[RMDB]
The record gives the reactivity of an RNA of 177 nucleotides to 2A3 and DMS. For 2A3, 2,545 sequencing reads were counted. For 2A3 the reverse transcriptase was SuperScript II with manganese. For DMS the reverse transcriptase was MarathonRT. The reactions ran in a buffer of 150 mM KOAc, 10 mM MgCl2 and 150 mM bicine (pH 8.5), at 24 C.
RNA sequence: GGGAACGACUCGAGUAGAGUCGAAAAACAAAGCAUGGCUAGAAGAUGCCACCGCGGAUAGAGCUGAGGUACUCUUGACUUCUAGCCAGAAGAAUUCCCAAACCGCGGAGAGUGCUCUCGCAAAAAACUGAUUAACUUACUUCGGUAAGUUAAUCAGAAAAGAAACAACAACAACAAC
Reactivity to 2A3 in 0.01 (KOAc 150mM, MgCl2 10mM, bicine 150mM(pH8.5), 24C), signal-to-noise 2, nucleotides 027 to 126: a000c060a020a110a000g140c040a030u010g000g000c000u000a000g000a030a020g010a060u170g120c050c030a000c000c000g000c030g010g010a100u200a160g200a030g070c180u190g040a010g030g010u020a000c010u010c000u040u110g110a080c000u020u010c000u000a000g000c010c010a000g000a010a000g010a010a040u040u020c030c000c000a000a060a030c000c010g000c000g010g010a020g000a000g010u030g020c020u040c010u060c120g040c020a030a030a020a030a090a140
Reactivity to DMS in 0.01 (KOAc 150mM, MgCl2 10mM, bicine 150mM(pH8.5), 24C), signal-to-noise 3, nucleotides 027 to 126: a060c160a100a080a130g000c100a220u000g020g030c000u000a020g000a030a010g000a180u000g000c140c130a160c040c000g010c000g010g000a250u000a070g000a140g020c100u000g010a060g000g030u000a030c040u010c020u000u010g020a100c000u000u000c000u000a010g000c000c030a020g000a030a120g000a150a200u000u010c000c000c000a080a110a090c020c020g000c010g010g000a070g000a030g020u010g000c010u010c010u000c010g030c170a000a060a050a060a040a070